Record summary: Chemical mapping of a 177-nucleotide RNA with 2A3 and DMS. The RNA was probed in 150 mM KOAc, 10 mM MgCl2 and 150 mM bicine (pH 8.5) at 24 C. The data come from the RNA Mapping Database (RMDB), library OK2TST. DMS (dimethyl sulfate) methylates the pairing face of unpaired adenines and cytosines. For DMS the reverse transcriptase was MarathonRT. The DMS profile rests on 1,137 reads.
RNA sequence: GGGAACGACUCGAGUAGAGUCGAAAAAUUGUUCGGUGGUGGAUGUGAGCGCAACUUUCAACUGCGGCCAUUCAGUCUGGAGAUAGUCUUCCAUCAUGUUGAGGACGCGUGCCGCACCGCCGGUCGAGCAUCCACUAGUCUUCGGACUAGUGGAUGCAAAAGAAACAACAACAACAAC
Reactivity to 2A3 in 0.01 (KOAc 150mM, MgCl2 10mM, bicine 150mM(pH8.5), 24C), signal-to-noise 1, nucleotides 027 to 126: a040u090u080g000u040u060c010g010g000u000g010g000u000g050g070a300u050g080u090g060a120g000c000g000c010a070a060c040u090u150u120c050a040a010c010u020g050c000g150g000c000c050a070u100u060c050a060g040u000c080u090g080g000a010g010a040u120a040g080u090c040u140u000c040c000a050u140c030a020u210g050u120u080g010a010g000g010a000c010g000c060g050u030g080c070c000g040c010a020c020c000g000c000c000g010g000u100c040g010a010
Reactivity to DMS in 0.01 (KOAc 150mM, MgCl2 10mM, bicine 150mM(pH8.5), 24C), signal-to-noise 2, nucleotides 027 to 126: a140u030u000g000u010u000c010g060g040u010g050g000u000g010g000a080u000g020u000g000a280g030c020g000c000a080a240c090u000u000u000c070a020a010c040u000g010c230g020g000c080c060a070u000u000c160a060g000u000c100u000g010g020a030g020a140u000a120g000u000c030u000u000c030c070a080u020c160a040u010g000u000u020g010a120g010g000a020c060g030c140g010u000g020c040c020g000c010a000c000c000g020c000c020g000g000u010c040g000a150